The record gives the reactivity of an RNA of 177 nucleotides to DMS and 2A3. Values cover nucleotides 27 to 126. Source: RMDB library RFMREP, as collected in RNAgym.
RNA sequence: GGGAACGACUCGAGUAGAGUCGAAAAGAAGACAGCAGGGGCCUUGACGCUUAAUCAGCCUGCCGAGGUUGGCACAUGGGAAGUACGCCUCCAGGCUUUUUCCCUUUGCGCCUCGCUUCGAAUAUCGCAUAGAUCAAGUCUUCGGACUUGAUCUAUGAAAAGAAACAACAACAACAAC
Reactivity to DMS in 0.01 (KOAc 150mM, MgCl2 10mM, bicine 150mM(pH8.5), 24C), signal-to-noise 4, nucleotides 027 to 126: g000a040a030g010a120c170a160g000c000a010g000g000g000g000c000c040u010u020g020a180c240g000c020u000u010a020a030u010c220a050g030c010c010u000g000c020c000g000a010g010g010u010u010g010g020c000a020c140a020u000g000g000g010a030a040g020u000a050c220g010c010c010u020c300c290a190g020g010c000u000u000u000u000u000c000c000c000u010u000u000g020c020g000c000c000u000c030g000c020u000u010c010g020a090a070u020a080u000c140g010
Reactivity to 2A3 in 0.01 (KOAc 150mM, MgCl2 10mM, bicine 150mM(pH8.5), 24C), signal-to-noise 2, nucleotides 027 to 126: g020a010a020g060a060c190a050g000c000a010g000g010g020g030c040c000u140u170g090a090c090g000c010u010u020a010a020u030c160a000g170c000c000u000g000c000c010g020a000g050g050u140u230g300g020c010a070c040a090u060g000g000g010a000a030g060u040a020c030g000c010c010u040c090c080a070g000g000c020u000u050u000u000u050c000c000c030u010u010u010g000c000g010c000c000u000c000g000c010u010u030c010g030a040a030u100a060u130c050g000
The reactions ran in a buffer of 150 mM KOAc, 10 mM MgCl2 and 150 mM bicine (pH 8.5), at 24 C. DMS adducts were read by reverse transcription with MarathonRT. For 2A3, 2,413 sequencing reads were counted.